[RMDB]
RNA sequence: GGGAACGACUCGAGUAGAGUCGAAAAGAUAGAAAAGCUGGGUAAGACUCACCUGGCGACUCGUCGUCGACGAAGGGUCCUCAGCAGAGCUCACCGGCAGAGGCGCUAUGCAGGAACGCUAGGGGUCGUACAAUUUACUCUUCGGAGUAAAUUGUACAAAAGAAACAACAACAACAAC
Reactivity to 2A3 in 0.01 (KOAc 150mM, MgCl2 10mM, bicine 150mM(pH8.5), 24C), signal-to-noise 2, nucleotides 027 to 126: g020a020u230a010g100a010a130a020a030g000c040u060g030g040g050u150a160a100g050a190c010u010c050a050c000c020u020g010g010c000g020a020c010u030c050g060u010c030g070u070c060g040a130c000g030a070a120g000g010g010u020c020c000u010c000a050g010c050a020g010a010g000c010u000c030a020c030c000g020g000c050a020g030a060g080g040c030g020c050u050a030u100g020c010a030g090g110a060a030c020g000c040u030a030g020g000g000g000u010c030
Reactivity to DMS in 0.01 (KOAc 150mM, MgCl2 10mM, bicine 150mM(pH8.5), 24C), signal-to-noise 3, nucleotides 027 to 126: g020a100u010a070g010a100a130a140a210g010c040u000g030g000g000u020a080a110g010a100c070u000c070a080c180c020u000g010g000c110g010a040c060u000c130g000u000c020g010u000c080g010a080c050g010a070a090g000g000g010u010c000c020u000c030a060g010c060a100g000a100g010c030u000c080a070c050c030g020g000c060a060g000a100g010g000c070g020c060u000a050u010g030c060a060g000g000a090a100c070g000c040u000a070g000g010g000g020u000c070
Source: RMDB library OK2TRN, as collected in RNAgym. The record gives the reactivity of an RNA of 177 nucleotides to 2A3 and DMS. DMS adducts were read by reverse transcription with MarathonRT. The 2A3 profile rests on 2,022 reads. Conditions: 150 mM KOAc, 10 mM MgCl2 and 150 mM bicine (pH 8.5), 24 C. Reactivities are given for positions 27 through 126.